[RMDB]
RNA sequence: GGGAACGACUCGAGUAGAGUCGAAAAGAUGGGUCCGAUGGAUUAAUGCGUCGCCCGCCAUUGGAUCCUGAUUGAUAGAUUGAGGGCGACGGUCGGAUCACUCGGUAAUUCGGUGCUCGACGAGUGAUCCGUGAUGAUAGUUAAGACGAGCACCUAAGAGUAUCAUAGCAUUCGUGCUAUGAUACUCAAAAGAAACAACAACAACAAC
Reactivity to 2A3 in 0.01 (KOAc 150mM, MgCl2 10mM, bicine 150mM(pH8.5), 24C), signal-to-noise 4, nucleotides 027 to 156: g100a050u150g000g010g000u010c010c010g020a010u000g000g030a010u070u220a180a130u300g140c000g000u000c000g000c000c000c000g000c000c000a000u000u000g010g000a010u000c010c010u030g030a060u030u190g050a030u040a170g140a060u050u190g090a080g010g000g020c010g000a010c010g000g000u020c000g010g010a000u000c000a000c000u000c000g030g060u170a130a160u160u170c060g000g000u000g000c010u010c010g010a010c000g000a000g000u000g020a000u000c010c000g010u020g000a010u050g000a020u050a130g120u220u230a110a020g040a050c000g000a000g000c000a000c000c000u000a050a030